[RMDB]
RNA sequence: GGGAACGACUCGAGUAGAGUCGAAAAGCCGGGCCUUUCCUUCUGGGGAGCCGCAUGCCCUUCACUGGGUGUGUCGGGGAACCAGGACUUUUACUUUGAAAAAAUUAGAGUGUUCAAAGCAGGCCUAGUGAUUCGAAGUAUUCGUACUUCGAAUCACAAAAGAAACAACAACAACAAC
Reactivity to DMS in 0.01 (KOAc 150mM, MgCl2 10mM, bicine 150mM(pH8.5), 24C), signal-to-noise 3, nucleotides 027 to 126: g000c110c020g000g000g030c000c000u030u030u010c020c020u000u000c000u020g020g000g000g000a300g080c000c000g020c000a000u010g000c000c000c000u000u030c300a190c240u030g000g010g040u010g000u040g000u020c010g030g000g000g000a300a110c000c000a000g000g050a090c100u040u010u000u000a290c020u000u000u000g010a000a000a070a030a120a000u000u090a060g010a230g010u000g000u000u010c010a050a010a050g010c280a010g000g010c010c010u010a040
Reactivity to 2A3 in 0.01 (KOAc 150mM, MgCl2 10mM, bicine 150mM(pH8.5), 24C), signal-to-noise 5, nucleotides 027 to 126: g080c030c030g010g000g010c000c000u040u140u070c010c000u020u080c010u000g000g030g000g000a010g080c000c000g000c000a010u010g010c010c000c000u090u170c180a260c300u090g000g000g000u010g020u010g110u190c090g000g010g010g000a010a010c010c000a010g000g010a010c020u090u110u030u060a030c000u020u010u020g010a030a030a030a030a070a100u180u300a120g100a080g080u210g080u050u050c010a010a010a000g010c030a030g000g000c000c000u000a010